[RMDB]
RNA sequence: GGGAACGACUCGAGUAGAGUCGAAAACGAGGGUAUUGAAAUCCACUUUUGAUGAACGAUAUUGCUAGCACAUAAUAACGCAAUUGGUAUUGAAACGAUGCUACCUAAUACUGUACUUACGAUAGCCAUUAUAGCAUCGCUUCGGCGAUGCUAUAAUAAAAGAAACAACAACAACAAC
Reactivity to DMS in 0.01 (KOAc 150mM, MgCl2 10mM, bicine 150mM(pH8.5), 24C), signal-to-noise 3, nucleotides 027 to 126: c120g000a120g020g010g000u020a040u000u000g000a090a020a100u010c040c030a100c090u000u040u010u000g050a070u000g040a070a050c030g020a060u010a020u000u000g040c000u000a070g010c090a120c170a040u010a070a040u010a050a060c200g010c060a100a040u030u000g010g000u010a060u000u020g020a090a020a140c090g000a090u030g020c030u000a020c040c020u030a040a050u000a070c090u000g000u030a010c060u000u030a020c060g010a060u000a050g030c070c030
Reactivity to 2A3 in 0.01 (KOAc 150mM, MgCl2 10mM, bicine 150mM(pH8.5), 24C), signal-to-noise 5, nucleotides 027 to 126: c030g000a090g070g000g030u070a110u170u090g100a130a080a020u030c010c000a080c120u060u110u110u110g100a110u040g050a070a000c040g020a030u030a040u150u020g010c010u020a070g080c070a040c030a090u290a120a090u200a280a050c090g000c020a030a080u050u050g010g040u100a050u090u080g010a050a050a000c060g040a020u050g020c010u040a080c020c040u050a060a060u070a100c050u050g050u090a020c010u060u020a010c060g120a130u090a010g040c000c000